[RMDB]
RNA sequence: GGGAACGACUCGAGUAGAGUCGAAAAUGGGUGGGAGCGUUGAUCACAUUCAGCACGUCUUGCUGCACGCUCUGCGCCACAGCAGCGUUGACGGCUUCGGCAGCCGCAUAGGCCCCGCCAGCGCCGGCCUAAGAUCCGAAUUCGUUCGGAUCUUAGGAAAAGAAACAACAACAACAAC
Reactivity to DMS in 0.01 (KOAc 150mM, MgCl2 10mM, bicine 150mM(pH8.5), 24C), signal-to-noise 7, nucleotides 027 to 126: u000g000g010g030u000g000g000g010a030g010c010g020u000u000g020a110u010c210a140c260a150u000u010c030a030g010c010a070c300g000u010c190u000u000g010c000u000g020c150a030c020g000c020u010c020u010g010c030g000c010c030a080c080a080g000c080a060g000c020g010u000u000g000a080c010g010g000c090u000u010c070g020g020c070a190g010c010c010g010c100a060u000a080g010g010c000c040c040c030g000c030c300a050g000c150g030c020c020g000g000
Reactivity to 2A3 in 0.01 (KOAc 150mM, MgCl2 10mM, bicine 150mM(pH8.5), 24C), signal-to-noise 4, nucleotides 027 to 126: u100g030g000g000u040g010g010g000a010g000c010g020u050u110g060a120u220c100a070c040a270u160u100c000a000g010c030a010c120g190u060c120u160u150g000c020u030g050c010a000c010g000c000u020c010u220g130c010g010c000c030a180c000a050g030c010a010g000c030g050u060u060g110a210c000g030g000c020u070u030c020g000g000c020a000g010c010c020g040c030a060u100a060g080g000c010c000c010c030g000c020c010a100g010c050g000c030c010g020g000
Conditions: 150 mM KOAc, 10 mM MgCl2 and 150 mM bicine (pH 8.5), 24 C.
An RNA of 177 nucleotides, treated with DMS and 2A3 and read out base by base.
DMS adducts were read by reverse transcription with MarathonRT.
Values cover nucleotides 27 to 126.
Reactivities are rounded to 0.1 and cut off at 0 and 3.
The 2A3 profile rests on 4,509 reads.